[RMDB]
RNA sequence: GGGAACGACUCGAGUAGAGUCGAAAACAAUAACGGGUUCGUCACGCGUGGUAUCCGGAUGGUAAUGGUAAACCGUUCUGCUCAGGUUCAGACUCCGGCAGGCCUGACGGAUACUGAGUCCAAAUGUGUAUGACAGUGAGUUCGCUCACUGUCAUACAAAAGAAACAACAACAACAAC
Reactivity to 2A3 in 0.01 (KOAc 150mM, MgCl2 10mM, bicine 150mM(pH8.5), 24C), signal-to-noise 1, nucleotides 027 to 126: c060a060a070u100a120a000c000g040g010g000u130u040c020g060u040c100a030c030g090c010g110u060g030g010u050a010u030c010c020g000g000a020u050g020g050u090a270a070u080g010g080u120a140a090a180c000c040g010u080u040c010u000g000c000u060c180a060g000g000u000u090c010a030g040a130c070u000c050c020g030g000c010a020g000g000c000c000u020g020a020c000g010g000a000u010a030c000u010g010a020g000u000c000c020a000a210a070u210g050u040
This 177-nucleotide RNA was probed chemically with 2A3. Conditions: 150 mM KOAc, 10 mM MgCl2 and 150 mM bicine (pH 8.5), 24 C. 2A3 is a SHAPE reagent: it acylates the 2'-hydroxyl of flexible nucleotides of all four kinds. The data come from the RNA Mapping Database (RMDB), library RFMREP.